RNA sequence: GGGAACGACUCGAGUAGAGUCGAAAAGAUAUGGAUCCACCCUUCCGAUAAGAUGGCAUCGGAAACGAUGUCCAUCUUUUGACGGAACGGUGGAUCCUAAGUCAAAACUUACGGUUCGCCGUAAGAACAGAUCAUAAUGGUUCGCCAUUAUGAUCUGAAAAGAAACAACAACAACAAC
Reactivity to 2A3 in 0.01 (KOAc 150mM, MgCl2 10mM, bicine 150mM(pH8.5), 24C), signal-to-noise 3, nucleotides 027 to 126: g020a000u030a020u090g010g000a000u020c000c000a010c010c000c020u010u010c010c030g250a100u060a300a000g000a000u000g010g000c000a000u000c000g010g000a070a010a000c010g000a000u010g030u020c010c010a000u010c000u010u010u010u010g040a040c070g010g000a000a010c010g000g020u000g010g000a000u000c000c000u000a010a000g000u000c000a010a010a100a160c000u000u000a000c000g030g130u040u090c300g050c100c000g000u000a000a010g000a030a040
Reactivity to DMS in 0.01 (KOAc 150mM, MgCl2 10mM, bicine 150mM(pH8.5), 24C), signal-to-noise 9, nucleotides 027 to 126: g000a030u010a300u010g000g000a010u000c010c000a010c000c000c070u000u000c000c000g030a210u010a020a010g010a020u000g000g010c010a010u000c000g010g000a090a060a130c010g010a010u000g000u010c010c000a000u000c000u000u000u000u010g010a230c180g010g000a010a000c300g010g010u000g000g000a000u000c000c000u000a000a070g000u000c030a110a080a090a200c010u000u000a000c010g000g000u000u010c300g030c000c000g000u000a000a010g010a150a280